[RMDB]
RNA sequence: GGGAACGACUCGAGUAGAGUCGAAAACCCGCGACAUCAUCAAAUUGCGGGGACUCCCUAAAGCUGUGUGCUACUAAGCAGGUGCCGAAACGACCUGUGGCCGGGGUAAUGACCUGGGGUAUAGUAAAAACGCACCAGAUGCCACAAUGGGUGAUCCGGGAAGGUAAUUGUUCGCAAUUACCUUCCCAAAAGAAACAACAACAACAAC
Reactivity to 2A3 in 0.01 (KOAc 150mM, MgCl2 10mM, bicine 150mM(pH8.5), 24C), signal-to-noise 1, nucleotides 027 to 156: c040c000c000g000c010g010a060c020a190u240c010a000u030c030a060a100a100u190u100g010c000g000g010g010g010a020c020u080c000c000c000u040a130a120a110g020c010u010g070u040g000u010g200c000u010a010c020u040a000a000g020c000a000g060g030u090g220c080c080g200a200a050a030c070g020a000c010c000u020g010u020g000g000c000c000g000g000g000g030u000a090a090u080g020a040c020c000u120g000g080g050g000u070a130u040a300g010u030a000a080a000a000a000c020g000c000a000c000c000a000g020a010u020g050c050c110a000c040a090a030u060g060g000g010u030g030a040u020c020c080